[RMDB]
RNA sequence: GGGAACGACUCGAGUAGAGUCGAAAAGCUCUGCGAGACAGAUCGAACAACAAAGAGAGAUCGAAAAUCUUAGAGGAGAGAACGAAUCUGUCAACUUCACUAGGACAUUGUCGAUCAGAGGUCCAAAGACCUAGCAUGGGUUCGCCUAUGUUAGGUCAAAAGAAACAACAACAACAAC
Reactivity to DMS in 0.01 (KOAc 150mM, MgCl2 10mM, bicine 150mM(pH8.5), 24C), signal-to-noise 9, nucleotides 027 to 126: g000c010u000c000u010g000c020g000a300g000a020c010a070g000a030u000c000g000a300a210c050a070a110c290a100a150a070g000a070g020a300g000a010u000c010g000a090a080a100a190u000c010u000u000a010g000a100g010g000a010g000a120g010a140a040c040g010a120a090u040c120u040g000u000c090a070a110c010u000u000c000a070c000u010a010g000g000a010c100a120u020u010g010u010c000g000a170u010c010a030g010a030g000g010u010c000c020a060a110a080
Reactivity to 2A3 in 0.01 (KOAc 150mM, MgCl2 10mM, bicine 150mM(pH8.5), 24C), signal-to-noise 9, nucleotides 027 to 126: g030c000u000c000u000g020c030g010a030g000a030c010a010g010a020u010c020g050a070a060c030a070a020c040a040a300a010g120a020g010a000g000a020u010c010g050a050a040a020a050u000c000u010u010a010g010a050g030g010a010g010a000g040a070a020c040g050a120a170u140c110u160g050u030c030a040a060c010u010u010c000a010c030u000a000g000g020a000c020a120u080u130g030u020c010g000a000u020c000a000g010a010g030g020u000c000c000a020a050a010